[RMDB]
RNA sequence: GGGAACGACUCGAGUAGAGUCGAAAAUAGAUGAAUUUGAUGCAAUCUUUAAUUUAACACCAGAAGUUGAUCUUAUAUCUGGUCAUGAGACAAACCCGAUCAACCAUGCCUUCGGUACUCAGUCAGGCACGACAAGGCCAUUCGUGGCCUUGUCGUGAAAAGAAACAACAACAACAAC
Reactivity to 2A3 in 0.01 (KOAc 150mM, MgCl2 10mM, bicine 150mM(pH8.5), 24C), signal-to-noise 1, nucleotides 027 to 126: u200a000g000a050u180g050a070a090u000u080u080g180a110u110g000c070a060a000u000c050u000u220u110a170a230u210u260u140a180a040c130a000c120c000a000g000a140a040g110u200u180g000a020u000c000u000u200a200u040a090u300c000u000g000g000u010c020a130u270g050a020g000a040c110a100a000a130c000c000c000g070a050u040c000a000a020c140c000a040u050g000c000c000u000u110c050g000g000u050a040c000u000c090a000g160u050c000a000g000g180

Chemical mapping of a 177-nucleotide RNA with 2A3. Conditions: 150 mM KOAc, 10 mM MgCl2 and 150 mM bicine (pH 8.5), 24 C. For 2A3, 271 sequencing reads were counted.